[RMDB]
RNA sequence: GGGAACGACUCGAGUAGAGUCGAAAACUUGACUGGGCUAGACAGUCAAGAGGCUACAAUCUUGAUCGAGUAGCCCGAUCAAGAAAAUGUGCAGUGUUUGAGCGAGAAGCUCAAGCACUGCAUAAAACACCACGGGCAUGUUCGCAUGCCCGUGGUGAAAAGAAACAACAACAACAAC
Reactivity to 2A3 in 0.01 (KOAc 150mM, MgCl2 10mM, bicine 150mM(pH8.5), 24C), signal-to-noise 1, nucleotides 027 to 126: c000u000u000g000a000c170u030g070g000g040c040u020a030g000a300c000a010g020u000c000a000a000g000a000g030g120c100u200a190c220a140a060u010c000u000u000g000a000u020c060g120a060g180u010a050g020c000c010c000g030a060u000c000a000a000g100a080a110a030a080u030g060u000g000c000a000g000u000g000u000u040u000g000a000g020c010g020a040g080a290a100g010c000u000c000a000a000g000c000a000c000u000g010c000a000u000a000a000a000a000